[RMDB]
RNA sequence: GGGAACGACUCGAGUAGAGUCGAAAAAUACACCAGCAGUAGGACUCAGCGACCGUCACAACAAGGUUGUGCUGGUAUCCGGCGGUCGUAUAGCCCUGUCUUGCAGGUUGCCUUGCACUGACGUGCCACACCAUUUACAGAUUCGUCUGUAAAUGAAUCUUGGAUCAUGGUUCGCCAUGAUCCAAGAAAAAGAAACAACAACAACAAC
Reactivity to 2A3 in 0.01 (KOAc 150mM, MgCl2 10mM, bicine 150mM(pH8.5), 24C), signal-to-noise 1, nucleotides 027 to 156: a000u210a050c020a020c040c000a000g010c000a000g020u150a010g000g000a040c030u040c180a010g060c000g000a000c000c000g000u030c030a060c020a300a070c030a150a080g040g020u110u070g040u040g120c050u030g000g000u000a100u030c010c020g000g000c020g000g000u020c000g020u040a110u040a010g030c000c000c000u030g050u030c090u060u140g000c070a030g020g000u110u140g100c010c010u010u070g020c000a020c100u120g070a100c160g040u090g010c000c040a110c000a040c010c000a000u000u000u000a000c000a000g000a000u000u020c090g130u000c100u000g000u000a000a000a000u000g010a020a080
This 207-nucleotide RNA was probed chemically with 2A3. High 2A3 reactivity points to a flexible backbone, as in loops and unpaired stretches. The reactions ran in a buffer of 150 mM KOAc, 10 mM MgCl2 and 150 mM bicine (pH 8.5), at 24 C. 2A3 adducts were read by reverse transcription with SuperScript II with manganese.